Chemical mapping of a 177-nucleotide RNA with DMS. Reactivities are rounded to 0.1 and cut off at 0 and 3. It was measured as part of the RMDB library RFMREP.
[RMDB]
RNA sequence: GGGAACGACUCGAGUAGAGUCGAAAAUGGACAUGUGAGGUGGCUGCGAGCUAGCAGCGCCAGGGGACUUGUCGCACCUGAGCGCGCUGGCGAAUUCCCCGCAGUCACCCGGCCCCCGAGCCCUCGGCUGUGCUAUUUUGUUCGCAAAAUAGCACAGAAAAGAAACAACAACAACAAC
Reactivity to DMS in 0.01 (KOAc 150mM, MgCl2 10mM, bicine 150mM(pH8.5), 24C), signal-to-noise 1, nucleotides 027 to 126: u020g000g000a060c030a040u010g040u000g060a100g010g030u020g000g010c000u000g010c010g000a260g020c010u010a010g020c010a200g010c000g030c010c010a040g010g000g080g000a100c030u000u000g020u010c080g000c090a120c010c000u000g000a120g020c030g040c010g010c000u000g020g000c010g020a090a220u000u000c010c010c030c030g000c000a010g000u000c010a000c000c020c030g000g000c030c010c020c030c020g020a150g010c020c020c030u000c070g000g030